This 177-nucleotide RNA was probed chemically with 2A3. It was measured as part of the RMDB library RFM100. High 2A3 reactivity points to a flexible backbone, as in loops and unpaired stretches. For 2A3, 916 sequencing reads were counted. For 2A3 the reverse transcriptase was SuperScript II with manganese.

RNA sequence: GGGAACGACUCGAGUAGAGUCGAAAAACGGCUGUACGCAGCCGAGACUGUGCUCUCACUGUUCACCCAGCACUAGCAGUACCAGACGGUUCUGUGGAGUCCUGGGGAAUGGAGAGAGCACAGUCAAUCGCAUCUGGCCAUUCGUGGCCAGAUGCGAAAAAGAAACAACAACAACAAC
Reactivity to 2A3 in 0.01 (KOAc 150mM, MgCl2 10mM, bicine 150mM(pH8.5), 24C), signal-to-noise 2, nucleotides 027 to 126: a000c000g000g000c010u020g020u040a030c300g000c090a000g020c000c030g000a000g000a000c000u000g010u000g010c000u010c000u000c000a040c020u000g000u000u000c040a300c080c000c000a000g000c020a000c000u000a010g000c000a000g000u030a000c040c020a040g140a300c250g110g000u000u010c000u000g000u030g060g210a040g000u050c010c000u000g000g000g010g030a010a000u030g010g000a030g000a000g000a000g020c000a020c000a000g000u000c000a000a000